[RMDB]
RNA sequence: GGGAACGACUCGAGUAGAGUCGAAAAAUACAAGGGGAGGUUUCGGCCAAAUGUUGUAUGCAGAAAGCGUGAGGAAGGUCGCACUUAGACACUCACGAGUAGCGGUUCGGCAGUAGUGCUAAAAUGAGACAGUACGAAAAGUUCGCUUUUCGUACAACUUAGUUCUAAAGUUCGCUUUAGAACUAAGAAAAGAAACAACAACAACAAC
Reactivity to DMS in 0.01 (KOAc 150mM, MgCl2 10mM, bicine 150mM(pH8.5), 24C), signal-to-noise 3, nucleotides 027 to 156: a080u010a060c040a050a070g020g010g040g020a110g030g030u000u000u000c040g030g010c040c020a070a110a110u000g000u000u010g000u000a070u000g000c010a100g000a090a080a130g000c030g040u000g010a050g000g010a100a120g000g020u000c020g030c120a090c120u000u000a160g010a050c040a120c020u000c040a050c050g000a100g000u000a080g020c050g020g000u000u000c030g000g010c020a070g020u000a060g000u000g020c020u000a030a020a090a070u000g020a170g000a080c040a100g010u000a020c010g000a010a000a020a030g020u010u010c300g020c010u000u000u000u000c000g000u000a000c000a020a050
Reactivity to 2A3 in 0.01 (KOAc 150mM, MgCl2 10mM, bicine 150mM(pH8.5), 24C), signal-to-noise 4, nucleotides 027 to 156: a020u160a030c040a040a040g010g010g020g010a050g000g030u030u060u120c070g050g000c020c020a080a110a080u090g000u060u010g020u040a050u100g030c040a020g110a070a070a020g050c010g030u020g010a000g040g050a150a080g110g000u020c010g000c040a050c090u110u120a040g020a000c010a010c040u020c000a010c020g010a010g020u050a020g000c040g010g040u080u070c020g040g000c020a020g020u120a010g030u020g070c020u110a020a040a040a070u090g010a030g010a050c070a060g000u000a000c000g000a000a010a000a000g030u050u050c130g020c100u000u000u000u010c000g000u000a000c000a000a000
An RNA of 207 nucleotides, treated with DMS and 2A3 and read out base by base. It was measured as part of the RMDB library M2RFPK. Reactivities are given for positions 27 through 156. DMS adducts were read by reverse transcription with MarathonRT. 2A3 adducts were read by reverse transcription with SuperScript II with manganese.